[RMDB]
Overview
An RNA of 177 nucleotides, treated with DMS and 2A3 and read out base by base. Reactivities are given for positions 27 through 126. Source: RMDB library OK1LIB, as collected in RNAgym.
RNA sequence: GGGAACGACUCGAGUAGAGUCGAAAAUGACUGCUUCUGACCCCAGAUGGCCUCAUUAUUACACUUUUCUUUUUAAAGAAGUGCCAUCUGUUUUUGAGGAUUUUGAACAUGUUUUGCAAAGCACUUCCACCACGAGUACUUUCGAGUACUCGUGGUGAAAAGAAACAACAACAACAAC
Reactivity to DMS in 0.01 (KOAc 150mM, MgCl2 10mM, bicine 150mM(pH8.5), 24C), signal-to-noise 1, nucleotides 027 to 126: u000g010a130c070u000g000c010u030u020c010u010g000a120c030c060c030c110a090g000a070u020g050g000c010c000u010c060a070u040u000a110u050u020a250c100a110c060u000u000u010u040c020u000u000u020u000u010a070a030a160g010a000a000g020u000g000c000c090a040u000c090u010g000u030u000u000u000u000g000a100g000g000a090u000u000u040u020g010a080a030c180a180u000g010u020u010u000u020g000c020a070a080a200g000c040a000c010u000u020c000
Reactivity to 2A3 in 0.01 (KOAc 150mM, MgCl2 10mM, bicine 150mM(pH8.5), 24C), signal-to-noise 3, nucleotides 027 to 126: u170g040a040c040u020g040c030u060u010c010u050g170a160c050c010c000c030a000g060a120u090g090g050c010c010u030c010a040u050u220a120u150u150a050c030a040c080u060u070u130u020c020u060u080u020u030u070a030a050a010g020a030a000g030u040g040c030c030a060u010c040u010g010u030u010u000u030u030g060a030g030g000a050u000u070u160u230g050a100a050c060a100u130g020u030u120u050u040g060c140a080a040a000g010c010a010c000u000u000c010